[RMDB]
RNA sequence: GGGAACGACUCGAGUAGAGUCGAAAAAUAUUACUUUUAAGAAAAACGUUAGAUUGUUCCUUGACCGACGGCUCCAUAAAGGCCCUAAGAAGAAGUGAUUACAUCUAGCUAUGUAGUCAAGAGUGGAAGUGACCCUUUUAUUCGUAAAAGGGUCACUAAAAGAAACAACAACAACAAC
Reactivity to DMS in 0.01 (KOAc 150mM, MgCl2 10mM, bicine 150mM(pH8.5), 24C), signal-to-noise 1, nucleotides 027 to 126: a030u010a070u000u020a030c090u010u080u040u000a050a160g000a070a130a050a020a110c200g000u010u000a000g000a120u000u000g000u020u000c000c000u000u000g040a170c020c030g010a090c300g010g000c050u000c050c090a120u000a050a150a140g000g010c040c010c030u030a110a080g000a070a020g000a050a140g030u000g000a060u020u000a010c080a000u000c040u030a040g010c200u020a010u000g000u030a010g020u000c000a050a080g000a130g020u040g000g000a140
Reactivity to 2A3 in 0.01 (KOAc 150mM, MgCl2 10mM, bicine 150mM(pH8.5), 24C), signal-to-noise 2, nucleotides 027 to 126: a010u150a030u090u150a110c020u090u130u130u230a070a040g060a110a010a000a000a030c030g020u000u000a020g000a120u080u050g040u010u030c040c000u020u090g050a030c020c030g150a110c020g010g000c000u020c110c010a130u130a230a140a070g020g020c000c000c010u090a090a050g050a090a000g050a040a000g090u170g060a150u010u140a000c000a000u000c060u030a010g040c030u050a110u080g070u070a010g050u040c030a070a000g090a080g040u140g120g060a090